[RMDB]
RNA sequence: GGGAACGACUCGAGUAGAGUCGAAAAGGCGAUCGAGAGGCCCUCUCAUUAAUGCGGAGAUGUCACGCUGACAGAAUGAUAUUAGAUGUCCGCUUCCGGAUGCAUCGCGGCGAUGAUUACAUAGGACAUCGAUUACCCAUUAGCUUCGGGGAAGCAAGGGUACCAUGAGUUUCGACUCAUGGUACCCAAAAGAAACAACAACAACAAC
Reactivity to 2A3 in 0.01 (KOAc 150mM, MgCl2 10mM, bicine 150mM(pH8.5), 24C), signal-to-noise 1, nucleotides 027 to 156: g020g000c040g050a050u000c040g000a060g000a060g300g010c010c000c000u020c000u100c000a180u190u280a210a230u270g030c040g000g000a150g000a060u100g040u030c050a110c100g000c090u110g000a000c020a040g300a140a170u170g070a060u070a070u120u170a100g000a130u000g010u010c090c090g030c060u040u000c150c000g010g000a000u110g040c000a000u000c120g000c120g000g120c000g100a030u100g000a000u090u240a040c000a000u070a010g000g000a000c000a000u000c000g000a000u000u060a000c000c000c000a020u140u300a000g060c000u000u090c000g080g000g000g000a000a000g200c040a080a070

Source information:
Structure probing data (2A3) for a 207-nucleotide construct. 2A3 adducts were read by reverse transcription with SuperScript II with manganese. For 2A3, 291 sequencing reads were counted. Source: RMDB library OK3TST, as collected in RNAgym.